Conditions: 150 mM KOAc, 10 mM MgCl2 and 150 mM bicine (pH 8.5), 24 C. The record gives the reactivity of an RNA of 207 nucleotides to 2A3 and DMS. For 2A3 the reverse transcriptase was SuperScript II with manganese. The data come from the RNA Mapping Database (RMDB), library RFM130. 2A3 is a SHAPE reagent: it acylates the 2'-hydroxyl of flexible nucleotides of all four kinds.

RNA sequence: GGGAACGACUCGAGUAGAGUCGAAAAGGUGUUCCUAGGUUUGGAAAUAUAAAUCCCAUGGGAAGUCAGCUGAAGACCAUUUUAUGCAUCACUCAUCCUGUUAGAGCCCUGUGCUGUUCUGUCUCUCUAUAAGGUUACGCGUCAUUCGUGACGCGAAAACAAAUGACGGUUUCGACCGUCAUUUGUUAAAAGAAACAACAACAACAAC
Reactivity to 2A3 in 0.01 (KOAc 150mM, MgCl2 10mM, bicine 150mM(pH8.5), 24C), signal-to-noise 1, nucleotides 027 to 156: g000g010u010g020u030u080c000c040u080a090g020g010u110u120u100g130g060a110a090a000u230a060u110a110a190a130u020c040c010c010a050u060g010g010g050a020a090g040u040c000a010g000c070u080g030a060a040g050a040c020c020a080u110u120u030u120a040u090g030c030a000u050c040a000c020u060c010a030u040c020c000u020g030u070u080a070g000a010g040c050c070c050u060g020u050g070c000u020g040u070u000c010u010g120u090c000u010c000u000c030u120a070u010a190a050g090g030u040u060a060c020g000c020g010u000c000a040u030u110c100g060u010g000a000c020g030c000g040a000a030
Reactivity to DMS in 0.01 (KOAc 150mM, MgCl2 10mM, bicine 150mM(pH8.5), 24C), signal-to-noise 2, nucleotides 027 to 156: g000g020u010g000u000u000c010c000u010a160g010g030u030u000u000g010g000a070a110a160u010a080u000a110a110a130u000c030c000c040a200u020g000g000g010a120a170g000u000c050a100g000c050u010g010a110a120g020a100c070c030a100u000u020u000u000a080u010g000c060a110u000c070a080c020u000c030a110u000c000c000u000g020u000u000a070g000a210g010c080c020c030u000g010u010g000c030u000g030u000u000c080u020g020u000c010u010c000u010c020u000a170u000a080a120g010g000u000u020a120c010g030c000g030u010c000a120u000u000c270g010u000g010a000c000g030c020g000a000a020